Conditions: 150 mM KOAc, 10 mM MgCl2 and 150 mM bicine (pH 8.5), 24 C. Chemical mapping of a 177-nucleotide RNA with 2A3 and DMS. For DMS, 5,479 sequencing reads were counted.
RNA sequence: GGGAACGACUCGAGUAGAGUCGAAAAUAAACGGGAUGCUUGAGGAUCUCCUGUCAAUGAAUAGCUCAGUGUUUUGUUCAAGAAUCAGAUAAUGCAUUAUGCCUAUACACUUAACCUCUCGGGGUUGUAUCUCCAUUUGAUUCGUCAAAUGGAGAUAAAAAGAAACAACAACAACAAC
Reactivity to 2A3 in 0.01 (KOAc 150mM, MgCl2 10mM, bicine 150mM(pH8.5), 24C), signal-to-noise 3, nucleotides 027 to 126: u050a000a070a020c010g070g000g020a020u050g030c050u060u100g040a080g060g030a060u060c010u030c000c000u030g060u070c020a040a120u090g070a110a090u060a110g000c000u010c110a040g020u000g100u110u030u060u090g050u060u040c030a070a030g020a100a050u020c030a020g030a130u050a120a070u180g000c000a000u010u080a030u190g020c000c000u110a080u040a100c060a020c030u120u070a010a040c000c000u030c020u030c070g060g000g000g030u010u050g010
Reactivity to DMS in 0.01 (KOAc 150mM, MgCl2 10mM, bicine 150mM(pH8.5), 24C), signal-to-noise 5, nucleotides 027 to 126: u010a070a080a100c060g010g010g000a050u010g000c050u000u000g010a060g010g010a120u000c040u010c020c010u000g000u000c100a080a110u010g010a110a090u000a090g010c060u000c060a030g020u000g010u000u000u000u010g010u000u010c070a060a090g000a070a050u000c070a040g010a080u010a060a060u010g010c060a060u010u010a070u010g010c050c040u000a070u000a100c150a080c110u010u010a040a040c010c020u000c020u010c250g010g000g010g020u010u000g010
For 2A3 the reverse transcriptase was SuperScript II with manganese. It was measured as part of the RMDB library OK2TRN.